This 177-nucleotide RNA was probed chemically with 2A3 and DMS. For DMS the reverse transcriptase was MarathonRT. 2A3 is a SHAPE reagent: it acylates the 2'-hydroxyl of flexible nucleotides of all four kinds. The reactions ran in a buffer of 150 mM KOAc, 10 mM MgCl2 and 150 mM bicine (pH 8.5), at 24 C. 2A3 adducts were read by reverse transcription with SuperScript II with manganese.
[RMDB]
RNA sequence: GGGAACGACUCGAGUAGAGUCGAAAACCAUAACAGUUCGCUGUUAUGGACUGUCGGAAUCCGGAAUAAUUAAUCGUCCGCUUACGAUUAAUACCGACUAUAAAGCGUAACACUUCGGUGUUACGAAACUUUGAUGUCUCUUCGGAGACAUCAAAGUAAAAGAAACAACAACAACAAC
Reactivity to 2A3 in 0.01 (KOAc 150mM, MgCl2 10mM, bicine 150mM(pH8.5), 24C), signal-to-noise 3, nucleotides 027 to 126: c000c000a010u020a010a000c000a000g060u080u090c160g050c130u000g000u020u010a000u000g000g010a050c070u090g000u020c020g000g040a070a140u050c020c060g070g170a090a080u260a100a020u050u010a000a000u010c010g040u040c050c110g100c250u080u160a010c010g010a010u000u000a010a010u020a080c010c000g010a010c000u020a060u070a170a100a020g090c010g000u000a010a000c010a000c020u040u090c220g120g000u000g000u000u000a000c000g010a020a000
Reactivity to DMS in 0.01 (KOAc 150mM, MgCl2 10mM, bicine 150mM(pH8.5), 24C), signal-to-noise 2, nucleotides 027 to 126: c000c000a000u000a000a000c010a000g030u000u030c220g030c000u000g000u000u000a000u000g000g000a110c140u000g000u000c000g000g000a220a080u010c080c040g010g020a070a110u000a050a040u000u000a040a000u000c000g000u010c260c290g010c170u010u010a040c000g000a010u000u000a010a010u010a250c010c000g030a020c020u010a080u000a050a080a050g000c020g000u010a010a000c000a010c000u000u010c180g040g010u000g000u000u000a000c000g000a010a060